This 170-nucleotide RNA was probed chemically with DMS and 2A3. High DMS reactivity at an A or C suggests that its Watson-Crick edge is free. 2A3 adducts were read by reverse transcription with SuperScript II with manganese. Conditions: 150 mM KOAc, 10 mM MgCl2 and 150 mM bicine (pH 8.5), 24 C. Source: RMDB library 15KLIB, as collected in RNAgym.

[RMDB]
RNA sequence: GGGAACGACUCGAGUAGAGUCGAAAAAGCAGGGAGUGUCGUGCGUAGAGUUAACGUGCCCUACGUGUGUCUCCUAGCUAAUAAAGAGCAAGAAGCUAUUUUGAUGUCUGAAGACGUUAAGUUAAACAAACUUGCGUGUUCGCACGCAAGAAAAGAAACAACAACAACAAC
Reactivity to DMS in 0.01 (KOAc 150mM, MgCl2 10mM, bicine 150mM(pH8.5), 24C), signal-to-noise 4, nucleotides 027 to 129: a000g050c010a300g030g000g010a000g020u040g040u060c050g000u040g000c030g020u020a030g020a120g050u000u000a040a120c260g010u040g020c000c030c000u000a020c000g040u000g030u040g000u040c030u020c010c010u000a180g040c020u000a060a100u050a110a090a050g010a060g020c000a110a090g020a000a070g030c100u020a090u010u010u010u000g020a090u000g010u020c010u060g030a050a050g010a090c090g020u000u000a050a040g040u020u040a040a090a130c070a080a050a070
Reactivity to 2A3 in 0.01 (KOAc 150mM, MgCl2 10mM, bicine 150mM(pH8.5), 24C), signal-to-noise 5, nucleotides 027 to 129: a000g050c040a010g000g000g010a000g030u100g070u250c020g040u010g010c000g000u000a000g030a000g020u030u090a150a120c160g130u260g020c000c000c000u000a000c000g000u010g020u070g000u000c000u000c070c000u010a020g030c020u010a000a000u200a060a130a010g130a000g010c120a100a050g060a100a010g090c010u010a190u080u150u040u080g140a130u030g030u030c040u060g040a080a010g020a000c010g030u080u030a080a040g030u070u110a080a020a020c080a040a030a000